[RMDB]
The data come from the RNA Mapping Database (RMDB), library OK1LIB. Structure probing data (2A3) for a 177-nucleotide construct.
RNA sequence: GGGAACGACUCGAGUAGAGUCGAAAACGAAUCAGUAACUAUGUUCAUUUUUUUAGGAGUAGGACGUCUAGCCAGUAUGGAAGAGGAUUUUCUAGAUACUCUCUUCAACAUCUUUGAUCUCAAUGGACCAUCACAACCCCUUCGGGGGUUGUGAUGGAAAAGAAACAACAACAACAAC
Reactivity to 2A3 in 0.01 (KOAc 150mM, MgCl2 10mM, bicine 150mM(pH8.5), 24C), signal-to-noise 2, nucleotides 027 to 126: c010g000a020a030u290c150a050g030u110a040a010c080u010a010u140g060u030u000c130a300u070u000u060u000u000u020u130a040g000g000a000g030u030a000g000g130a010c000g050u000c000u070a030g010c000c000a040g060u070a110u200g060g020a000a000g000a040g070g000a020u110u110u050u000c030u000a010g000a090u010a000c000u000c040u020c000u030u050c000a060a110c000a000u000c020u070u000u230g160a190u000c180u000c110a050a110u070g210g000a110

For 2A3 the reverse transcriptase was SuperScript II with manganese. Values cover nucleotides 27 to 126.